[RMDB]
RNA sequence: GGGAACGACUCGAGUAGAGUCGAAAAAGAGAGCGCGAAAAAGAUCGAUCGAUCGUUUGAACGCGCAAGUUUAAGUUUGAUACGGCCAUACUAGCUAGCUAGCUAGCAAAACAAACUUAAUAAAGAAAGUUAACAUCCGUUUCGACGGAUGUUAACUAAAAGAAACAACAACAACAAC
Reactivity to 2A3 in 0.01 (KOAc 150mM, MgCl2 10mM, bicine 150mM(pH8.5), 24C), signal-to-noise 1, nucleotides 027 to 126: a030g180a000g000a010g000c030g000c010g020a010a040a000a040a040g030a000u020c040g100a090u160c210g000a000u000c070g030u080u080u050g020a120a000c010g020c020g000c000a010a000g020u000u000u080a020a000g000u000u000u000g100a130u170a160c040g060g030c010c000a030u040a070c000u010a010g010c020u020a010g170c070u080a000g000c030u060a000g000c020a030a050a030a010c000a010a000a000c020u050u010a060a000u120a040a050a050g090a120a150
Reactivity to DMS in 0.01 (KOAc 150mM, MgCl2 10mM, bicine 150mM(pH8.5), 24C), signal-to-noise 2, nucleotides 027 to 126: a120g000a170g010a170g020c010g040c000g020a050a050a040a030a060g000a010u000c010g000a100u020c180g000a030u000c010g000u000u000u040g000a140a120c010g000c030g040c000a060a030g000u000u000u000a000a000g010u000u000u000g010a070u000a100c300g000g020c050c040a210u000a080c020u000a000g000c020u000a100g030c220u000a030g000c020u000a010g000c060a030a070a070a050c000a000a000a000c000u000u000a020a010u010a110a050a100g000a070a140